Structure probing data (2A3 and DMS) for a 177-nucleotide construct. DMS (dimethyl sulfate) methylates the pairing face of unpaired adenines and cytosines. It was measured as part of the RMDB library OK1LIB.
RNA sequence: GGGAACGACUCGAGUAGAGUCGAAAAAUCAUACUGGAUAGUAGAAUGAGGUGUCACGGUCUCUGCUAUCUAGUAUGAGUACCACAGGUAGACUAGAUUGUGAUACCUCAUGUCUAUCCGUGGUAAAGUAUCUGUAAGUAUUCGUACUUGCAGAUACAAAAGAAACAACAACAACAAC
Reactivity to 2A3 in 0.01 (KOAc 150mM, MgCl2 10mM, bicine 150mM(pH8.5), 24C), signal-to-noise 8, nucleotides 027 to 126: a000u050c010a010u020a040c010u040g000g000a000u000a000g030u010a010g070a170a040u040g000a010g000g020u050g030u040c020a000c010g020g010u000c010u000c000u010g000c000u000a000u000c000u000a000g000u000a000u000g000a000g010u020a020c000c020a020c020a010g000g000u000a000g000a030c000u010a010g010a030u010u040g010u020g040a020u030a040c000c000u000c010a010u030g020u000c000u000a000u000c000c000g020u020g010g000u040a040a040a020
Reactivity to DMS in 0.01 (KOAc 150mM, MgCl2 10mM, bicine 150mM(pH8.5), 24C), signal-to-noise 9, nucleotides 027 to 126: a070u020c040a060u020a040c050u020g010g000a010u000a000g010u020a060g000a080a020u010g000a020g000g010u000g000u010c030a020c020g000g010u010c000u000c050u000g000c000u000a000u000c000u000a050g010u000a010u010g000a080g010u010a020c050c070a050c060a030g000g010u000a000g000a090c030u000a060g000a020u000u010g000u010g010a030u010a030c020c020u000c010a030u000g000u000c000u000a000u000c000c020g010u010g000g000u010a050a080a110